[RMDB]
RNA sequence: GGGAACGACUCGAGUAGAGUCGAAAAAAUAAGAGUUUGGAUUAACCUAUAGGGAAUUAGCGAUCAAGAAUACAACCUAAGGACCAGGUUGACUUAAUUAUUCCAUAGGUUGGUGGAAGCUAGCGAACCACCUCUCUAGUUUCGACUAGAGAGGUGGAAAAGAAACAACAACAACAAC
Reactivity to DMS in 0.01 (KOAc 150mM, MgCl2 10mM, bicine 150mM(pH8.5), 24C), signal-to-noise 1, nucleotides 027 to 126: a050a040u020a120a110g000a060g020u000u000u000g000g010a030u020u000a060a020c020c000u000a050u000a120g040g010g000a030a030u000u000a030g000c160g000a100u000c100a040a020g000a170a110u010a140c030a020a020c050c000u010a080a090g020g000a150c180c080a020g020g000u000u000g000a090c030u020u000a020a050u000u000a060u000u000c000c000a080u010a000g000g000u000u000g000g040u000g020g000a000a040g000c040u000a100g050c120g020a070a130

The record gives the reactivity of an RNA of 177 nucleotides to DMS.
The reactions ran in a buffer of 150 mM KOAc, 10 mM MgCl2 and 150 mM bicine (pH 8.5), at 24 C.
The data come from the RNA Mapping Database (RMDB), library M2PK90.
For DMS the reverse transcriptase was MarathonRT.